[RMDB]
RNA sequence: GGGAACGACUCGAGUAGAGUCGAAAACAAUGGAGAAGCCGAAGCAGCAGUCUGAUCCCCAGCACCCUUUGGGGAGUGACGGCUCCUCAACGCUGUCGAAGGUGGAGACACCUCUCCUCCAGCAUUCGCGCUAUUAAAAUUUCGAUUUUAAUAGCGCAAAAGAAACAACAACAACAAC
Reactivity to DMS in 0.01 (KOAc 150mM, MgCl2 10mM, bicine 150mM(pH8.5), 24C), signal-to-noise 6, nucleotides 027 to 126: c080a130a110u010g010g010a040g010a090a040g010c050c030g010a110a110g000c150a050g010c040a060g000u000c010u000g000a130u000c010c000c010c020a080g000c170a160c160c170c090u000u010u000g010g010g010g020a010g010u000g010a090c080g010g010c000u000c090c010u000c060a080a080c220g000c000u000g000u010c250g000a070a030g010g030u000g000g000a240g000a210c030a030c020c000u000c100u000c040c000u000c040c020a070g010c130a130u000u000c130
Reactivity to 2A3 in 0.01 (KOAc 150mM, MgCl2 10mM, bicine 150mM(pH8.5), 24C), signal-to-noise 4, nucleotides 027 to 126: c020a030a160u130g040g020a040g010a050a010g040c030c030g020a060a010g000c060a010g010c010a010g050u030c020u070g080a150u070c000c000c000c000a010g050c030a130c020c010c000u080u130u050g010g000g000g010a010g010u050g050a020c020g030g000c000u020c010c010u040c040a030a050c080g000c010u040g050u140c040g040a060a010g000g010u020g000g020a030g020a010c030a030c020c020u020c030u020c000c000u000c010c020a040g060c010a080u260u300c100
This 177-nucleotide RNA was probed chemically with DMS and 2A3. 2A3 adducts were read by reverse transcription with SuperScript II with manganese. For 2A3, 6,300 sequencing reads were counted. The RNA was probed in 150 mM KOAc, 10 mM MgCl2 and 150 mM bicine (pH 8.5) at 24 C.